[RMDB]
RNA sequence: GGGAACGACUCGAGUAGAGUCGAAAAUUAUAACGUGGCUGCCCGGCCUGGAACAGUCCCACAACCUGCUCCAGAAGGACCCAAGGUUGACAGAUCCUUUCAGACCUAUGCUAACGAAACAAAAUAAUCCUUCGAAAAGAUUCGUCUUUUCGAAGGAAAAAGAAACAACAACAACAAC
Reactivity to DMS in 0.01 (KOAc 150mM, MgCl2 10mM, bicine 150mM(pH8.5), 24C), signal-to-noise 1, nucleotides 027 to 126: u010u010a080u000a080a150c090g020u010g000g000c000u000g010c010c000c040g000g010c060c000u000g000g020a030a020c070a130g000u000c000c010c060a150c110a070a090c020c020u000g030c100u010c010c000a100g000a090a100g010g000a070c080c020c010a050a080g000g010u010u010g010a080c140a150g000a050u010c010c080u000u000u000c090a130g000a100c060c100u030a030u000g010c050u030a050a060c100g020a130a090a090c130a050a060a100a040u010a060a100
Structure probing data (DMS) for a 177-nucleotide construct.
Conditions: 150 mM KOAc, 10 mM MgCl2 and 150 mM bicine (pH 8.5), 24 C.
It was measured as part of the RMDB library M2PK90.
Values cover nucleotides 27 to 126.